[RMDB]
RNA sequence: GGGAACGACUCGAGUAGAGUCGAAAAGAGGGGUCGCUGGAGGCCGCGCGGUGGCUCCUGGGACGCGGUAACACCGACCUGGCGUUGGUCAUGGCGGAGCGGGCGGCCGGGCUCAGGAUCAGGGCCGCGUGCUGUAUGAAUUCGUUCAUACAGCACGAAAAGAAACAACAACAACAAC
Reactivity to DMS in 0.01 (KOAc 150mM, MgCl2 10mM, bicine 150mM(pH8.5), 24C), signal-to-noise 6, nucleotides 027 to 126: g000a080g010g000g000g020u000c020g010c030u000g010g000a130g010g000c010c020g020c020g010c030g010g020u000g010g000c020u010c010c020u010g010g000g000a090c080g000c070g010g000u010a090a160c110a220c030c020g000a110c020c020u000g000g000c040g010u010u010g020g010u000c030a040u010g000g010c030g000g000a110g010c060g010g000g010c030g010g010c010c010g010g010g020c020u000c020a080g000g010a130u010c110a110g010g000g010c020c020g010
About this RNA:
Structure probing data (DMS) for a 177-nucleotide construct. The reactions ran in a buffer of 150 mM KOAc, 10 mM MgCl2 and 150 mM bicine (pH 8.5), at 24 C. It was measured as part of the RMDB library OK2TST. In probing experiments dimethyl sulfate is read out at A N1 and C N3, which are open when not base-paired.